[RMDB]
This 177-nucleotide RNA was probed chemically with DMS and 2A3.
It was measured as part of the RMDB library OK1LIB.
RNA sequence: GGGAACGACUCGAGUAGAGUCGAAAAGACGCACGAGUGCAGCGUCAAGAUUCGUUAGAGGCAAUGAAUCAAGUACUCGAAGGAUCUCGAAAGACACCACGGGAUCCAAGGCCUCAAGGUGUCAGAAGGGUACGAGCUAGUUCGCUAGUUCGUACCCAAAAGAAACAACAACAACAAC
Reactivity to DMS in 0.01 (KOAc 150mM, MgCl2 10mM, bicine 150mM(pH8.5), 24C), signal-to-noise 6, nucleotides 027 to 126: g000a010c030g020c010a140c100g000a100g030u010g010c110a240g010c010g000u030c020a110a140g000a030u010u000c000g040u000u020a080g000a010g000g020c020a300a060u010g000a010a000u000c000a090a150g030u000a080c020u000c000g010a260a210g000g000a000u010c010u000c020g010a010a060a040g000a020c010a010c000c030a300c020g000g010g020a010u000c010c020a010a210g000g010c010c000u000c000a100a050g000g020u000g000u000c010a180g000a110a130
Reactivity to 2A3 in 0.01 (KOAc 150mM, MgCl2 10mM, bicine 150mM(pH8.5), 24C), signal-to-noise 9, nucleotides 027 to 126: g020a000c010g040c020a030c120g090a070g140u230g060c100a030g020c030g030u020c030a010a020g000a020u020u010c010g040u040u070a050g010a020g080g000c030a030a070u080g000a010a000u010c010a020a040g120u060a080c010u010c030g010a120a140g000g000a000u000c000u000c000g030a070a040a020g000a010c010a000c000c010a010c000g000g000g000a000u000c000c020a030a030g030g010c000c000u020c010a010a080g000g000u010g000u000c010a020g100a120a060
The 2A3 profile rests on 30,302 reads. 2A3 adducts were read by reverse transcription with SuperScript II with manganese.